[RMDB]
RNA sequence: GGGAACGACUCGAGUAGAGUCGAAAAAAAGUGGAAGAGAGAGCUUAACUCAGCAAGACAGAGCAGUAGGGGUCAUGUUACUGCAGCCUUGGUUGGGUGAGAGGUUUGGCCCACCACCUUGUUCAAGGUCCCAAAAGCUGAGAUUACUUCUUGGCUCCUUAAAUACAACCUUCGGGUUGUAUUUAAGAAAAGAAACAACAACAACAAC
Reactivity to 2A3 in 0.01 (KOAc 150mM, MgCl2 10mM, bicine 150mM(pH8.5), 24C), signal-to-noise 2, nucleotides 027 to 156: a000a000a000g060u080g010g020a080a020g040a010g010a000g000a010g040c010u020u040a050a020c010u010c040a020g020c020a060a000g060a100c090a030g060a020g070c020a010g020u050a010g030g010g050g030u080c040a030u090g030u080u050a050c010u020g000c010a010g030c000c000u060u040g010g030u070u060g010g030g000u020g010a070g010a040g070g000u160u160u140g070g020c030c000c000a040c010c000a010c000c010u040u060g020u070u080c040a020a000g010g020u050c030c020c000a030a150a010a020g000c000u010g000a000g000a030u060u090a050c080u020u050c010u030u010g000g000c000u030c010
Reactivity to DMS in 0.01 (KOAc 150mM, MgCl2 10mM, bicine 150mM(pH8.5), 24C), signal-to-noise 2, nucleotides 027 to 156: a010a050a100g040u000g010g020a110a080g010a150g000a100g010a060g010c050u000u010a090a080c010u000c020a050g020c050a090a080g020a180c030a080g010a120g030c020a040g010u000a050g030g010g010g000u000c090a110u000g000u010u000a070c030u000g020c030a250g060c000c010u000u000g020g020u000u010g020g010g010u010g000a110g010a100g020g000u010u000u010g010g010c020c010c010a170c040c020a030c020c010u010u000g000u000u010c030a030a040g020g000u000c020c010c030a060a070a080a130g000c010u000g010a010g010a160u010u010a100c120u000u000c010u010u010g010g000c020u010c080
The record gives the reactivity of an RNA of 207 nucleotides to 2A3 and DMS.
2A3 adducts were read by reverse transcription with SuperScript II with manganese.
The reactions ran in a buffer of 150 mM KOAc, 10 mM MgCl2 and 150 mM bicine (pH 8.5), at 24 C.
For 2A3, 1,634 sequencing reads were counted.